Annotation:
An RNA of 177 nucleotides, treated with 2A3 and DMS and read out base by base. The RNA was probed in 150 mM KOAc, 10 mM MgCl2 and 150 mM bicine (pH 8.5) at 24 C.

RNA sequence: GGGAACGACUCGAGUAGAGUCGAAAAGCACGUAUCUUCGGAUACGUGCAAAUAAAAUCAGCGGUAAGCAGGCGAAAAAUAUUACCGCUGAACGCCUGCUUAAAAGUCUUCCCUUCGGGGAAGACAACGUAUUAAAUCCCUUCGGGGAUUUAAUACGAAAAGAAACAACAACAACAAC
Reactivity to 2A3 in 0.01 (KOAc 150mM, MgCl2 10mM, bicine 150mM(pH8.5), 24C), signal-to-noise 1, nucleotides 027 to 126: g010c000a000c000g000u020a000u000c010u030u110c300g110g000a000u000a000c000g000u000g000c020a000a000a000u010a000a000a000a040u060c010a000g020c000g040g000u010a010a020g050c040a020g150g070c110g170a030a090a070a090a010u130a110u090u060a020c000c010g020c030u010g000a000a000c000g050c010c000u050g030c050u050u050a050a090a030a010g000u030c000u000u000c000c000c020u000u020c180g050g000g000g000a000a000g010a000c000a000a020
Reactivity to DMS in 0.01 (KOAc 150mM, MgCl2 10mM, bicine 150mM(pH8.5), 24C), signal-to-noise 1, nucleotides 027 to 126: g000c010a010c010g000u010a000u010c000u000u030c230g030g010a000u000a010c000g010u000g000c000a010a020a020u010a050a080a080a080u000c010a020g000c010g040g010u000a010a000g010c180a100g030g030c060g000a030a060a050a100a070u000a090u010u000a040c000c020g040c020u000g000a010a080c110g000c030c010u030g000c080u000u000a060a100a100a120g010u010c010u010u000c000c000c000u000u020c170g020g010g000g000a010a010g010a000c010a010a060